[RMDB]
RNA sequence: GGGAACGACUCGAGUAGAGUCGAAAAAGCAACUCGCACGUCUUCAACCAUAAGCGCCUCCAGAUGCACACGACUGUGAGUGAACGCUUCAAGUAUCACCUGAAUCUCGUUAUCGUCGAGCUGGUGGCUAGACUCGUGCCUUCGGGCACGAGUCUAGAAAAGAAACAACAACAACAAC
Reactivity to 2A3 in 0.01 (KOAc 150mM, MgCl2 10mM, bicine 150mM(pH8.5), 24C), signal-to-noise 1, nucleotides 027 to 126: a000g060c040a000a000c070u050c070g040c010a000c170g000u070c020u070u070c000a060a060c150c070a080u030a130a090g120c060g000c040c020u080c020c000a010g000a230u090g080c000a030c000a000c070g130a000c010u020g070u070g020a000g070u070g080a070a040c010g030c150u050u040c030a110a050g000u070a020u040c000a000c000c000u000g050a070a000u000c000u000c000g060u000u090a250u210c170g090u120c000g070a050g000c030u000g000g000u000g000g000